About this RNA: Conditions: 150 mM KOAc, 10 mM MgCl2 and 150 mM bicine (pH 8.5), 24 C. An RNA of 177 nucleotides, treated with DMS and 2A3 and read out base by base. For 2A3 the reverse transcriptase was SuperScript II with manganese. The data come from the RNA Mapping Database (RMDB), library TTRDEL.

RNA sequence: GGGAACGACUCGAGUAGAGUCGAAAAGAUAUGGACAUCCUGAUGAGCUUUGAUCUCGGAAACGAGGGAGCUCUGCCAGGAGUGUCCUAAGUCAAAAUCUGGCGUUUAGUUCGCUAAACGCCAGAAACCAUCUAGACAAGUUCGCUUGUCUAGAUGGAAAAGAAACAACAACAACAAC
Reactivity to DMS in 0.01 (KOAc 150mM, MgCl2 10mM, bicine 150mM(pH8.5), 24C), signal-to-noise 3, nucleotides 027 to 126: g010a040u010a300u000g010g000a020c010a070u000c000c000u000g000a220u010g000a010g010c010u010u010u010g000a070u000c000u000c000g000g010a150a070a190c000g000a010g030g010g010a040g010c000u000c000u010g040c210c010a000g000g000a050g010u010g010u000c000c000u000a010a070g000u000c040a110a080a120a190u010c010u000g000g010c000g000u000u000u000a010g010u010u020c280g000c010u000a010a000a000c000g010c000c000a000g000a000a080a140
Reactivity to 2A3 in 0.01 (KOAc 150mM, MgCl2 10mM, bicine 150mM(pH8.5), 24C), signal-to-noise 2, nucleotides 027 to 126: g000a020u060a030u120g020g010a000c000a010u020c020c020u010g010a030u030g000a010g030c030u220u300u170g100a120u100c000u010c010g010g030a100a080a030c020g000a000g010g000g000a000g000c010u000c010u010g060c030c000a030g040g030a040g070u070g000u000c000c000u010a090a040g050u030c040a020a010a000a300u020c000u010g000g000c010g000u000u000u000a020g000u020u040c240g000c230u010a000a000a000c000g000c020c000a000g000a000a000a000